RNA sequence: GGGAACGACUCGAGUAGAGUCGAAAAAUACCCCAUGAUGCUCAGGUCCGCCGCAUCUCCUGGGUCGUGGGGUCGGUCGGCUGGCAGGCAAUUUCAAGCGGUUCCUCGUGCCGUUUUGCAGGCUAGCAAGUGGAUGUACUUUCGAGUACAUCCACUUAAAAGAAACAACAACAACAAC
Reactivity to 2A3 in 0.01 (KOAc 150mM, MgCl2 10mM, bicine 150mM(pH8.5), 24C), signal-to-noise 2, nucleotides 027 to 126: a000u140a020c000c010c000c000a000u030g050a050u140g050c020u010c060a020g020g030u050c030c040g050c020c020g040c060a100u050c050u020c040c000u020g000g010g000u030c000g000u010g000g000g000g010u010c020g040g040u070c020g050g000c010u010g010g000c000a010g050g000c020a010a040u100u120u150c070a150a040g000c000g010g000u080u080c020c010u080c050g040u060g010c010c000g010u020u010u020u020g000c010a010g020g010c000u000a000g000c030
Reactivity to DMS in 0.01 (KOAc 150mM, MgCl2 10mM, bicine 150mM(pH8.5), 24C), signal-to-noise 3, nucleotides 027 to 126: a100u030a080c010c000c010c040a040u010g000a120u040g010c030u000c030a060g000g010u010c050c060g000c030c030g010c070a100u030c080u000c050c030u000g000g000g020u010c030g050u000g000g000g000g000u000c100g020g010u020c070g000g020c000u000g010g000c020a020g010g010c010a020a080u030u010u040c220a120a130g000c000g000g000u000u010c010c030u010c090g020u020g000c010c020g000u000u000u010u010g000c000a010g010g000c020u010a010g000c030